[RMDB]
RNA sequence: GGGAACGACUCGAGUAGAGUCGAAAAGAGGACGAAGCAGGAAGCAUGCCGUGGAUCCCACAUGCACUGGGGCAGGGCAGCCAGGUUCCAGAGCAGCAGGCAUGUGCAUUAUGGGUGCCAGGUGGCCCGGAUCAAUAGGAUUCGUCCUAUUGAUCCGAAAAGAAACAACAACAACAAC
Reactivity to DMS in 0.01 (KOAc 150mM, MgCl2 10mM, bicine 150mM(pH8.5), 24C), signal-to-noise 7, nucleotides 027 to 126: g000a070g010g000a050c060g000a090a060g010c050a100g010g000a100a150g010c010a030u010g000c010c030g020u030g020g000a110u020c020c030c010a130c100a110u000g000c020a100c020u000g000g000g010g000c010a060g000g000g010c110a060g000c020c020a100g010g010u000u000c020c010a010g010a090g010c020a040g010c080a150g000g000c020a020u000g000u000g020c060a060u030u030a060u010g010g000g020u010g010c020c030a100g000g010u000g010g010c040c070
Reactivity to 2A3 in 0.01 (KOAc 150mM, MgCl2 10mM, bicine 150mM(pH8.5), 24C), signal-to-noise 6, nucleotides 027 to 126: g070a020g040g030a030c060g040a070a020g030c060a040g070g020a050a020g030c020a020u040g020c010c020g190u100g050g010a130u070c010c030c010a020c010a040u030g010c020a020c050u020g000g000g020g000c020a010g030g040g000c010a020g060c030c020a030g030g000u060u050c010c010a010g020a010g030c020a000g020c010a010g030g000c020a020u040g010u030g020c000a020u090u160a050u180g060g000g010u030g040c010c020a030g040g050u070g050g000c020c010